[RMDB]
RNA sequence: GGGAACGACUCGAGUAGAGUCGAAAAGGGUGCCAUUUAGUCAGUGGCAGAGCCAGAUCCAAAUGCAGGUCUCCUGACUCCAAGUGCAGGGCUCAUUUUAUCGUCCGGUUGCAGCACGCUGGCGGCCCCUUAGGUUCUCGUUCGCGAGAACCUAAGGAAAAGAAACAACAACAACAAC
Reactivity to DMS in 0.01 (KOAc 150mM, MgCl2 10mM, bicine 150mM(pH8.5), 24C), signal-to-noise 2, nucleotides 027 to 126: g020g030g030u010g020c010c020a160u000u000u010a130g030u000c050a030g020u020g010g010c020a140g010a080g000c000c010a000g000a020u000c170c180a010a030a030u010g000c240a030g020g000u020c050u000c030c000u000g010a080c020u000c190c230a080a090g010u010g000c020a030g000g000g000c030u010c020a020u000u010u000u000a060u020c170g020u000c010c030g020g010u000u000g000c020a090g000c030a080c050g020c030u010g010g020c020g010g000c050c040
Reactivity to 2A3 in 0.01 (KOAc 150mM, MgCl2 10mM, bicine 150mM(pH8.5), 24C), signal-to-noise 1, nucleotides 027 to 126: g000g020g030u090g000c010c050a100u100u070u080a070g010u040c040a010g010u000g000g000c010a000g010a000g010c020c000a020g010a040u090c110c000a050a030a000u110g030c160a050g080g150u000c030u060c030c010u010g060a100c010u150c160c110a170a020g120u140g200c000a010g050g060g030c030u010c010a000u090u090u070u090a180u180c010g020u030c030c000g010g000u020u110g030c010a020g010c000a010c100g000c000u010g000g000c010g000g010c000c030